[RMDB]
RNA sequence: GGGAACGACUCGAGUAGAGUCGAAAACUUAUCCGGUUUUAACGCUGUUUUAUUGGCGCAAAGGUUUACGGAUAAACAACUAAUAAUUAAACCUUUUGUGUGCGAAACGUGGUUGUAUAACGUACUCACUGCCCCCAGGGAUUCGUCCCUGGGGGAACAUACCUCAGUACUUCGGUACUGAGGUAUGAAAAGAAACAACAACAACAAC
Reactivity to 2A3 in 0.01 (KOAc 150mM, MgCl2 10mM, bicine 150mM(pH8.5), 24C), signal-to-noise 4, nucleotides 027 to 156: c020u030u010a000u000c000c000g010g020u000u010u010u070a050a020c010g020c020u020g150u170u170u070u200a120u130u270g030g000c010g000c030a020a000a000g000g000u010u000u000a000c010g000g010a010u050a040a080a010c040a030a010c050u220a050a130u140a170a040u170u140a030a020a010c000c000u010u040u090u150g060u010g000u010g010c090g040a120a080a000c030g020u050g040g040u070u030g020u040a100u040a180a020c010g010u020a030c030u020c040a060c050u060g010c010c000c000c000c010a000g020g000g010a020u030u060c150g030u000c060c000c000u000g000g000g010g010g000a000a000
Reactivity to DMS in 0.01 (KOAc 150mM, MgCl2 10mM, bicine 150mM(pH8.5), 24C), signal-to-noise 1, nucleotides 027 to 156: c060u010u000a070u000c000c020g040g010u000u010u010u010a230a090c030g010c000u000g030u000u010u000u000a250u000u030g010g000c000g060c010a020a070a000g040g000u000u000u010a180c000g000g010a030u000a010a030a210c040a100a200c070u010a060a170u020a090a150u000u010a000a040a010c020c010u000u010u000u000g020u000g000u000g020c000g000a080a120a000c050g040u000g000g030u000u020g040u000a070u000a030a060c010g010u040a050c050u000c000a130c010u010g080c000c010c000c000c000a010g000g020g060a050u000u000c280g030u000c010c000c000u000g050g000g000g000g000a000a000